[RMDB]
RNA sequence: GGGAACGACUCGAGUAGAGUCGAAAAGAUAUGGAUUAGACAACAGCAUGUCCUUCGGAAACGAAGGCAUGACAUGUCUUGUCCUAAGUCAAACCUUGAGAGAUCAGUUCGCUGAUCUCUCAAGGAACAAUUGACCAGCGUUCGCGCUGGUCAAUUGAAAAGAAACAACAACAACAAC
Reactivity to DMS in 0.01 (KOAc 150mM, MgCl2 10mM, bicine 150mM(pH8.5), 24C), signal-to-noise 2, nucleotides 027 to 126: g000a050u000a260u010g000g010a030u000u000a000g020a010c030a020a000c290a190g000c000a010u000g000u030c010c020u000u010c000g030g000a080a060a150c010g020a000a010g000g010c000a000u000g000a160c060a130u000g000u010c000u000u000g000u000c000c000u000a030a130g030u010c010a130a060a210c020c000u000u000g010a020g020a020g020a000u000c000a020g000u000u000c290g030c030u000g000a010u000c010u000c010u010c000a020a000g000g000a010a070
Reactivity to 2A3 in 0.01 (KOAc 150mM, MgCl2 10mM, bicine 150mM(pH8.5), 24C), signal-to-noise 1, nucleotides 027 to 126: g020a020u070a080u090g000g010a000u050u000a000g000a000c000a190a030c040a080g090c000a010u040g190u300c000c020u000u000c040g020g000a050a040a050c010g000a000a010g000g000c000a000u030g020a020c010a020u010g000u000c000u000u010g000u030c000c010u020a080a010g010u000c050a090a030a300c000c000u000u000g030a000g000a010g000a010u000c000a020g030u120u080c180g110c190u020g000a000u000c000u010c000u000c000a000a000g010g000a000a000